Notes: An RNA of 177 nucleotides, treated with 2A3 and DMS and read out base by base. DMS adducts were read by reverse transcription with MarathonRT. The reactions ran in a buffer of 150 mM KOAc, 10 mM MgCl2 and 150 mM bicine (pH 8.5), at 24 C.

RNA sequence: GGGAACGACUCGAGUAGAGUCGAAAAGUCUCACGAGUGCAGAGACAAAGGUAGUUGACUCCGGCGCUACCAGUACUCGAAGGAAUGCGAAAGAGUUCACGUAUUCCAACCGGAGAAGAACUCAAAAGCCUAGCCUAUGAUUCGUCAUAGGCUAGGCAAAAGAAACAACAACAACAAC
Reactivity to 2A3 in 0.01 (KOAc 150mM, MgCl2 10mM, bicine 150mM(pH8.5), 24C), signal-to-noise 3, nucleotides 027 to 126: g010u000c000u010c000a030c030g080a030g110u120g010c070a030g030a020g040a180c040a070a090a000g030g000u010a010g020u010u200g070a070c000u010c010c000g010g000c000g030c010u000a010c010c010a000g000u050a000c010u000c020g030a080a020g030g050a050a050u090g000c020g020a170a120a200g060a070g000u040u000c070a060c050g000u000a010u030u010c000c030a050a070c000c010g000g030a020g000a010a020g000a000a040c070u070c110a040a000a050a000
Reactivity to DMS in 0.01 (KOAc 150mM, MgCl2 10mM, bicine 150mM(pH8.5), 24C), signal-to-noise 1, nucleotides 027 to 126: g000u000c000u000c000a300c070g000a000g110u110g000c000a300g040a120g000a040c300a110a070a200g000g000u000a000g000u000u030g010a190c040u040c000c000g000g000c110g000c000u000a070c000c000a180g050u000a040c000u000c000g000a290a190g120g000a070a000u030g000c000g000a000a000a000g000a000g000u000u000c000a300c000g000u000a000u000u000c080c000a180a150c000c050g000g000a050g000a300a040g000a010a020c010u010c000a040a170a010a080